[RMDB]
RNA sequence: GGGAACGACUCGAGUAGAGUCGAAAAGAUAUGGAUCACAAGACAUGCGUACAAAGGGUCCGAUGAAAGAGCUCGGAAACGAGCUCUGGAGGACCCAUAAAGCGCAACAGCUUGUGAUCCUAAGUCACUUAAAUCGAUAGUUCGCUAUCGAUUUAAGAAAAGAAACAACAACAACAAC
Reactivity to DMS in 0.01 (KOAc 150mM, MgCl2 10mM, bicine 150mM(pH8.5), 24C), signal-to-noise 3, nucleotides 027 to 126: g000a040u010a300u000g000g000a000u000c020a010c010a000a020g010a060c130a270u000g000c010g030u000a050c140a180a230a240g000g000g000u000c000c000g000a140u000g000a220a150a030g010a000g010c000u000c000g000g000a090a080a140c000g010a010g010c000u000c000u010g020g000a050g000g000a020c000c000c000a010u000a040a120a280g000c010g000c000a040a050c300a180g000c000u000u000g010u010g010a010u000c000c010u000a000a090g000u000c020a250